[RMDB]
RNA sequence: GGGAACGACUCGAGUAGAGUCGAAAAGCAUCGACGACGGUCCUGCCAUGAGACCGUAACGAGGACAUGUAGCCUCGAAUGGCGUCGGGGAGCCGGCAGCUUACCCCAAGGAUGAGCGCCUAAUGCCUAUACCCGAUUCGCUUCGGCGAAUCGGGAAGUGCAUAUUUGUGUUCGCACAAAUAUGCACAAAAGAAACAACAACAACAAC
Reactivity to 2A3 in 0.01 (KOAc 150mM, MgCl2 10mM, bicine 150mM(pH8.5), 24C), signal-to-noise 3, nucleotides 027 to 156: g040c020a070u120c060g100a060c040g010a000c020g020g000u010c010c050u090g130c030c030a200u200g010a090g000a110c000c010g010u000a020a020c000g000a010g000g010a020c050a100u270g060u240a000g010c000c000u020c010g010a080a100u080g030g000c010g010u040c020g010g010g000g010a010g020c020c080g080g000c030a030g000c000u050u100a230c000c010c000c030a060a060g090g000a070u110g050a020g010c010g050c020c000u090a100a080u100g020c010c000u080a030u070a100c000c000c000g000a000u000u000c000g000c010u040u020c060g110g000c010g000a000a000u000c010g000g000g000a010a000
Structure probing data (2A3) for a 207-nucleotide construct.
The RNA was probed in 150 mM KOAc, 10 mM MgCl2 and 150 mM bicine (pH 8.5) at 24 C.
For 2A3 the reverse transcriptase was SuperScript II with manganese.